Source: RMDB library TTRDEL, as collected in RNAgym.
The record gives the reactivity of an RNA of 177 nucleotides to 2A3 and DMS.
The RNA was probed in 150 mM KOAc, 10 mM MgCl2 and 150 mM bicine (pH 8.5) at 24 C.
For 2A3 the reverse transcriptase was SuperScript II with manganese.

[RMDB]
RNA sequence: GGGAACGACUCGAGUAGAGUCGAAAAGAUAUGGAUGGAGGGAGCUUAAACAUUCGGAAACGAAUGUGAGCGAGGAUCUCCUGUCCUAAGUCAAACCAGGUCGAUUACUUCGGUAAUCGACCUGGAAUCGUUAAUAUAGCUUCGGCUAUAUUAACGAAAAAGAAACAACAACAACAAC
Reactivity to 2A3 in 0.01 (KOAc 150mM, MgCl2 10mM, bicine 150mM(pH8.5), 24C), signal-to-noise 4, nucleotides 027 to 126: g010a000u060a020u140g000g010a020u010g020g010a030g000g010g000a020g000c000u070u040a300a280a020c000a010u010u000c000g030g040a090a070a050c010g000a010a010u000g010u040g000a010g000c030g070a190g010g000a010u000c000u000c000c000u020g100u010c000c000u060a200a020g060u030c040a040a050a110c010c000a000g000g000u010c010g000a000u000u010a010c000u040u130c300g060g000u000a010a010u020c010g000a000c010c000u000g000g010a000a020
Reactivity to DMS in 0.01 (KOAc 150mM, MgCl2 10mM, bicine 150mM(pH8.5), 24C), signal-to-noise 5, nucleotides 027 to 126: g000a030u000a300u000g000g000a040u010g000g000a020g020g000g010a040g020c000u000u010a080a090a090c000a000u000u000c000g010g000a090a090a210c010g010a020a010u000g020u000g000a030g000c000g010a070g020g000a040u010c010u000c000c000u010g040u000c000c000u000a060a110g020u000c040a100a100a260c010c000a000g010g010u000c000g000a020u000u000a000c000u000u020c190g030g000u000a000a000u000c000g010a000c000c000u000g000g000a010a020